An RNA of 177 nucleotides, treated with DMS and 2A3 and read out base by base. The RNA was probed in 150 mM KOAc, 10 mM MgCl2 and 150 mM bicine (pH 8.5) at 24 C. Source: RMDB library TTRDEL, as collected in RNAgym. For DMS the reverse transcriptase was MarathonRT.
RNA sequence: GGGAACGACUCGAGUAGAGUCGAAAAGAUAUGGAGUGGUGAGGGAGCCUAGUUGAUCGGAAACGAUCACUAGGCUUUGAUCUCACGUAACAUCUCCUAAGUCAAAAGAUCUCCUUCGGGAGAUCAAGCAAGAUAAUGUGUUCGCACAUUAUCUUGCAAAAGAAACAACAACAACAAC
Reactivity to DMS in 0.01 (KOAc 150mM, MgCl2 10mM, bicine 150mM(pH8.5), 24C), signal-to-noise 3, nucleotides 027 to 126: g000a030u010a110u010g000g010a020g020u010g050g010u000g000a040g010g010g000a000g020c000c000u000a000g010u000u020g010a010u000c000g000g000a020a020a060c000g020a000u000c000a030c000u000a000g000g010c000u000u000u010g000a030u010c000u000c000a000c000g030u000a080a210c270a080u010c010u010c000c000u010a010a160g000u000c010a090a070a140a160g010a000u000c010u000c000c000u010u010c200g010g000g010a030g000a000u000c000a030a100
Reactivity to 2A3 in 0.01 (KOAc 150mM, MgCl2 10mM, bicine 150mM(pH8.5), 24C), signal-to-noise 1, nucleotides 027 to 126: g010a010u010a010u080g000g000a010g020u150g020g010u020g060a010g000g000g010a010g030c010c000u000a010g010u050u280g020a000u000c000g010g000a000a030a010c000g000a000u000c000a010c000u000a000g010g000c000u040u010u010g000a000u000c000u000c000a000c000g030u050a080a030c040a130u150c000u000c020c000u000a030a000g000u020c040a110a080a030a130g020a010u000c000u000c000c000u010u110c300g180g000g010a000g000a000u000c010a000a030